[RMDB]
RNA sequence: GGGAACGACUCGAGUAGAGUCGAAAAGCGGGGCUUGAAACGCGGGUAGCGCGCACGCCCGGUGAAGAAGUUCGCAUACGCGGUGUGCUGGUGCCGAAGUGUCUGCUGCAACGGCACGCUCGACACCUAGAACAUACCGUAUUCGUACGGUAUGUAAGUAUCGUCCAUACUUCGGUAUGGACGAUACAAAAGAAACAACAACAACAAC
Reactivity to DMS in 0.01 (KOAc 150mM, MgCl2 10mM, bicine 150mM(pH8.5), 24C), signal-to-noise 1, nucleotides 027 to 156: g000c060g000g010g020g020c020u000u010g010a080a080a030c040g000c000g000g020g030u000a120g070c090g030c050g040c040a100c110g010c020c010c020g000g000u010g010a040a220g030a120a150g000u000u000c060g000c010a090u000a100c100g040c050g020g000u000g010u000g000c030u020g040g010u000g000c000c000g030a040a100g000u020g000u000c030u000g000c040u000g010c230a190a220c140g030g020c000a010c010g070c050u000c020g040a050c020a060c010c000u010a170g000a180a020c010a000u000a000c000c000g000u020a050u010u000c300g040u010a030c010g010g040u010a000u000g010u030a020a170
Reactivity to 2A3 in 0.01 (KOAc 150mM, MgCl2 10mM, bicine 150mM(pH8.5), 24C), signal-to-noise 2, nucleotides 027 to 156: g090c060g020g050g000g010c030u040u060g070a100a080a060c110g010c030g060g000g090u110a070g060c050g000c040g010c060a000c010g010c000c000c000g000g010u030g020a010a060g070a060a000g060u070u120c020g000c050a020u060a210c060g000c100g120g000u020g000u000g030c060u070g000g010u030g000c020c020g060a110a060g030u060g050u080c080u100g060c040u070g010c040a020a020c040g010g000c020a000c020g020c060u010c020g000a000c000a020c010c000u030a040g030a110a000c000a000u000a000c000c000g000u000a000u010u110c200g060u030a010c020g000g000u000a000u010g010u000a020a020